[RMDB]
RNA sequence: GGGAACGACUCGAGUAGAGUCGAAAACAUAAAAGGAAACACUUAUGAUCUAAUGGAUCUUCUUAGGCGUGGGUUUGAUGCUAAAGAGUCUGACUUGGAUAGGGUAACCAUUAUUAGGAAAAACAUCUCAAUCUAGGGUUUUCGAACCCUAGAUUGAAAAAGAAACAACAACAACAAC
Reactivity to 2A3 in 0.01 (KOAc 150mM, MgCl2 10mM, bicine 150mM(pH8.5), 24C), signal-to-noise 2, nucleotides 027 to 126: c050a010u180a070a120a010a010g000g070a090a200a040c040a040c060u180u050a060u270g040a070u040c040u040a160a060u120g080g000a030u020c000u100u000c020u120u120a040g060g000c040g020u050g020g080g000u070u120u210g040a030u040g010c020u070a180a050a020g030a030g000u030c030u030g040a090c010u080u040g010g030a040u080a060g030g030g000u020a050a000c050c010a030u050u090a080u120u160a120g050g000a070a110a040a000a000c010a080u260c050
Reactivity to DMS in 0.01 (KOAc 150mM, MgCl2 10mM, bicine 150mM(pH8.5), 24C), signal-to-noise 2, nucleotides 027 to 126: c060a090u020a030a040a110a090g010g010a080a060a080c060a060c130u000u000a070u010g000a050u000c020u000a100a090u010g010g020a040u000c040u000u000c060u010u010a110g030g020c040g020u000g000g020g010u010u010u010g030a050u020g010c050u000a040a160a090g000a060g010u010c040u010g000a080c060u000u000g000g020a100u000a030g010g000g000u000a050a070c060c010a040u000u000a080u000u010a090g010g000a030a060a030a090a060c170a080u000c100